[RMDB]
RNA sequence: GGGAACGACUCGAGUAGAGUCGAAAAUAACACUGGCGGCUGCGUAUCACUCUAGGGUACGUGAUAGUGCGAUAUAAGAAGCACUGGUACAUGCCGGCAGGGACAGUUAAGAGAUGGCCGCAGUCACAAAAGGGGUCAUUCUUCGGAAUGACCCCAAUACUAACUUAGAGUUCGCUCUAAGUUAGUAAAAAGAAACAACAACAACAAC
Reactivity to DMS in 0.01 (KOAc 150mM, MgCl2 10mM, bicine 150mM(pH8.5), 24C), signal-to-noise 4, nucleotides 027 to 156: u000a100a100c040a060c030u000g020g010c000g020g010c020u000g000c040g010u010a040u000c000a120c070u020c070u000a180g020g040g020u000a020c030g040u000g000a120u010a020g020u000g020c000g010a150u010a180u010a190a140g010a210a300g020c000a010c010u000g010g010u010a080c070a080u000g020c000c010g020g000c030a080g010g010g020a060c040a100g000u010u000a080a070g000a150g000a100u000g010g010c100c030g010c030a090g010u000c030a090c050a040a080a100a140g000g020g040g010u000c000a010u000u000c000u000u010c300g020g000a010a020u010g010a030c000c000c000c000a000a000
Reactivity to 2A3 in 0.01 (KOAc 150mM, MgCl2 10mM, bicine 150mM(pH8.5), 24C), signal-to-noise 2, nucleotides 027 to 156: u040a020a000c050a020c110u100g180g070c040g000g020c000u000g020c020g000u010a040u090c040a040c130u080c150u210a100g080g020g000u010a000c030g050u040g020a010u060a070g000u000g000c020g060a040u060a040u060a300a130g080a130a010g030c000a000c000u000g010g020u100a050c060a040u070g050c000c040g060g000c000a050g020g040g010a030c070a090g000u070u030a120a000g010a000g010a060u020g000g040c000c000g030c040a030g000u080c050a030c060a060a130a050a070g000g000g010g000u000c010a000u000u020c000u050u080c110g060g020a000a000u000g000a000c000c000c000c000a000a000